[RMDB]
An RNA of 177 nucleotides, treated with DMS and 2A3 and read out base by base. Values cover nucleotides 27 to 126. For DMS, 29,759 sequencing reads were counted.
RNA sequence: GGGAACGACUCGAGUAGAGUCGAAAACUUUGUCAAUCCUUUGAAUUUGUGACGGUCGCAAUCCUUGAUAAUCCCCUUGGCAUCAGGGCAGUCCAGGCCAGCCUGGAUCGGACCAAGGAAGGGUUUGUAUUGAGUUAAAUUUCGAUUUAACUCAAUAAAAAGAAACAACAACAACAAC
Reactivity to DMS in 0.01 (KOAc 150mM, MgCl2 10mM, bicine 150mM(pH8.5), 24C), signal-to-noise 9, nucleotides 027 to 126: c060u010u010u010g020u000c050a060a070u000c020c030u000u000u010g010a090a170u000u000u010g020u010g010a090c090g010g020u000c040g010c100a080a080u000c010c020u000u000g010a070u010a060a080u000c030c010c010c030u000u000g000g010c070a100u000c050a070g000g010g010c100a100g000u000c010c010a020g000g010c110c180a190g000c010c010u000g000g010a010u000c050g010g000a080c020c010a040a040g010g000a070a060g010g000g010u000u000u010g010
Reactivity to 2A3 in 0.01 (KOAc 150mM, MgCl2 10mM, bicine 150mM(pH8.5), 24C), signal-to-noise 4, nucleotides 027 to 126: c010u070u100u190g050u050c030a060a070u090c030c000u090u050u170g150a150a090u120u160u210g120u100g040a040c050g020g010u050c010g000c110a040a080u040c010c000u060u070g040a060u110a160a050u030c010c010c000c020u000u010g030g010c010a050u050c050a050g000g070g000c030a020g020u000c000c000a000g000g010c020c040a020g080c110c010u010g010g000a010u050c030g060g020a030c000c010a010a000g040g010a030a090g020g000g000u010u030u050g040